[RMDB]
RNA sequence: GGGAACGACUCGAGUAGAGUCGAAAAUUUGUGAGGGGGAGGCGUGUCAGUGUAUGCGGAUACAUUAACUUGAAGGGGAGAUCAUAGUGGUGUGGUCCGCCUCUUGUUUGUGGCCAAACCUUGCGAGCUAUAUUAAUUUAUUCGUAAAUUAAUAUAGAAAAGAAACAACAACAACAAC
Reactivity to DMS in 0.01 (KOAc 150mM, MgCl2 10mM, bicine 150mM(pH8.5), 24C), signal-to-noise 5, nucleotides 027 to 126: u010u010u020g020u000g000a040g010g000g010g010g000a300g010g010c020g020u020g010u010c060a060g020u000g010u010a030u020g010c160g010g000a040u000a040c020a030u010u030a050a050c030u010u010g020a030a030g000g000g000g000a180g010a020u000c010a010u010a120g020u020g010g020u010g030u010g010g010u000c000c070g010c010c020u000c020u000u010g000u020u010u020g010u010g000g010c010c010a050a300a150c030c010u000u010g000c030g010a070g010
Reactivity to 2A3 in 0.01 (KOAc 150mM, MgCl2 10mM, bicine 150mM(pH8.5), 24C), signal-to-noise 2, nucleotides 027 to 126: u080u040u120g030u030g020a070g040g010g000g000g010a050g020g010c050g030u130g000u050c040a030g020u000g020u070a040u070g060c010g030g010a020u010a030c000a010u030u040a050a020c010u040u040g020a040a010g030g010g010g000a060g000a030u040c010a020u050a050g080u070g110g030u040g020u000g040g040u000c000c010g070c020c010u000c020u000u030g020u020u040u060g030u020g060g000c000c000a010a020a000c000c000u000u010g010c000g010a010g000

The data come from the RNA Mapping Database (RMDB), library OK1LIB. The record gives the reactivity of an RNA of 177 nucleotides to DMS and 2A3.